[RMDB]
RNA sequence: GGGAACGACUCGAGUAGAGUCGAAAAUAGCGUUUCAGCAUUAUUAAUUUGUUGGAUUGCUAAUUGUCUUUGAGCAUUGUUUAGAUGUGUUAAUUGAUCCAAUCUUUGUAAUGCUUCAGCUUUACGACCCCCAGAUAUACUUCGGUAUAUCUGGGGGAAAAGAAACAACAACAACAAC
Reactivity to 2A3 in 0.01 (KOAc 150mM, MgCl2 10mM, bicine 150mM(pH8.5), 24C), signal-to-noise 2, nucleotides 027 to 126: u050a010g020c010g020u010u010u040c020a000g020c040a010u000u070a080u130u220a180a290u090u070u030g000u000u010g010g000a010u050u110g000c010u040a020a150u050u080g070u000c040u100u050u210g000a010g000c010a010u040u000g030u060u070u000a020g010a030u020g140u030g040u230u110a180a210u160u200g110a070u040c050c000a050a030u000c010u000u010u050g010u020a000a000u010g030c000u090u070c060a040g000c040u150u130u060a090c070g090a100
Reactivity to DMS in 0.01 (KOAc 150mM, MgCl2 10mM, bicine 150mM(pH8.5), 24C), signal-to-noise 2, nucleotides 027 to 126: u000a030g000c020g010u010u000u000c050a040g010c020a000u020u030a300u000u020a130a160u010u000u000g020u000u010g010g000a010u000u030g000c050u000a010a130u000u010g000u010c020u000u000u000g010a040g020c010a030u000u000g000u000u000u000a000g000a020u000g000u000g040u000u050a070a190u000u000g000a100u010c100c070a060a020u010c020u000u000u000g010u010a000a000u000g000c010u020u000c280a080g000c130u000u040u000a090c160g010a290

Overview:
An RNA of 177 nucleotides, treated with 2A3 and DMS and read out base by base. It was measured as part of the RMDB library OK2TST. Conditions: 150 mM KOAc, 10 mM MgCl2 and 150 mM bicine (pH 8.5), 24 C.